The record gives the reactivity of an RNA of 207 nucleotides to 2A3. Values cover nucleotides 27 to 156. The RNA was probed in 150 mM KOAc, 10 mM MgCl2 and 150 mM bicine (pH 8.5) at 24 C. It was measured as part of the RMDB library M2RFPK. For 2A3, 640 sequencing reads were counted.

RNA sequence: GGGAACGACUCGAGUAGAGUCGAAAAACGCGGAGUACGCUCCGCGACAACACUUCUUUCGACCCGCUAACCGAGACCUAUGGGUCGUUAAAUUACGUCUCUGUCUUACUCACAUAACAUCGCACAAAAAACGUGGUUCGGUUCGCCGAACCACGAACAUGGUAUUCCCGUUCGCGGGAAUACCAUGAAAAGAAACAACAACAACAAC
Reactivity to 2A3 in 0.01 (KOAc 150mM, MgCl2 10mM, bicine 150mM(pH8.5), 24C), signal-to-noise 1, nucleotides 027 to 156: a010c000g000c000g010g000a000g010u030a020c220g030c050u010c010c010g070c030g040a010c040a020a040c050a070c090u130u140c030u030u270u100c000g000a000c030c000c000g020c200u160a000a010c020c020g020a010g000a060c040c000u030a130u300g000g000g000u000c000g010u010u020a000a080a000u220u070a010c040g030u000c000u040c000u040g100u070c030u030u100a180c050u080c100a070c090a180u130a200a020c020a160u220c070g000c120a040c080a120a100a020a050a060a020c110g000u010g000g000u000u000c000g040g000u000u050c190g020c030c000g000a010a000c000c000a010c000g000a000a000